[RMDB]
RNA sequence: GGGAACGACUCGAGUAGAGUCGAAAAGAUAUGGACGAUUCAAGCUCGAUAAGAUGGGAUCGGAAACGAUCCUCAUCUUUUGACGAGCGUAGAUCGUCCUAAGUCAAACCAGCUCUUCGGAGCUGGACCAGAUCAUUUGGUUCGCCAAAUGAUCUGGAAAAGAAACAACAACAACAAC
Reactivity to DMS in 0.01 (KOAc 150mM, MgCl2 10mM, bicine 150mM(pH8.5), 24C), signal-to-noise 3, nucleotides 027 to 126: g000a080u000a300u030g000g000a000c000g010a030u000u000c060a300a300g000c010u000c010g010a140u010a010a010g000a010u000g010g000g010a000u000c000g030g010a150a080a160c040g000a000u000c030c000u000c020a000u000c000u010u000u000u000g000a160c160g010a030g000c010g000u000a170g000a000u000c000g020u010c000c000u000a010a120g000u000c020a120a150a130c000c000a050g000c000u000c000u000u010c160g030g000a010g020c010u000g000g000a060
Reactivity to 2A3 in 0.01 (KOAc 150mM, MgCl2 10mM, bicine 150mM(pH8.5), 24C), signal-to-noise 1, nucleotides 027 to 126: g010a000u100a030u220g000g000a000c000g000a000u040u070c060a140a010g010c020u000c000g070a060u030a090a000g000a000u010g000g000g000a010u000c020g050g010a120a090a020c010g040a000u020c000c030u010c010a000u020c000u000u020u030u060g130a060c010g010a000g000c010g000u000a000g000a000u010c030g000u000c000c000u010a020a000g020u000c040a040a020a100c010c000a010g000c000u000c000u040u190c300g180g000a000g000c000u000g030g020a030